[RMDB]
RNA sequence: GGGAACGACUCGAGUAGAGUCGAAAAAUAGGCUUAUCAAGUGAGGUGGAGGGACUGGCCCGAUGAAACCCUGCAGCCAGAAAUGGUGCCAAUUCCUGCAGCGGAAACGUUGAAAGAUGAGCCGAUGUGACUCAGCACUUCGGUGCUGAGAAAAGAAACAACAACAACAAC
Reactivity to 2A3 in 0.01 (KOAc 150mM, MgCl2 10mM, bicine 150mM(pH8.5), 24C), signal-to-noise 2, nucleotides 027 to 129: a010u170a050g000g000c020u010u010a000u010c020a110a060g060u100g060a030g080g100u070g020g050a060g000g000g000a020c010u070g090g000c010c010c000g040a040u040g040a000a000a000c000c000c000u000g000c000a050g080c000c000a010g030a000a060a000u080g020g010u040g040c000c070a000a030u080u100c020c010u040g070c010a000g020c030g050g000a090a020a040c020g050u040u070g060a090a030a040g000a000u000g000a000g020c010c000g000a070u060g010u000g000a050
Reactivity to DMS in 0.01 (KOAc 150mM, MgCl2 10mM, bicine 150mM(pH8.5), 24C), signal-to-noise 3, nucleotides 027 to 129: a020u020a110g000g050c030u000u000a060u010c040a190a110g050u030g030a160g000g050u000g010g040a090g010g040g050a190c080u000g000g040c000c130c050g050a130u020g000a040a160a140c070c020c030u080g010c150a080g020c020c020a040g000a060a130a140u000g000g000u060g000c050c040a070a090u030u020c030c030u090g050c080a060g040c070g000g040a070a060a060c000g020u000u050g010a110a120a090g000a050u010g010a030g000c030c030g010a120u060g030u020g010a170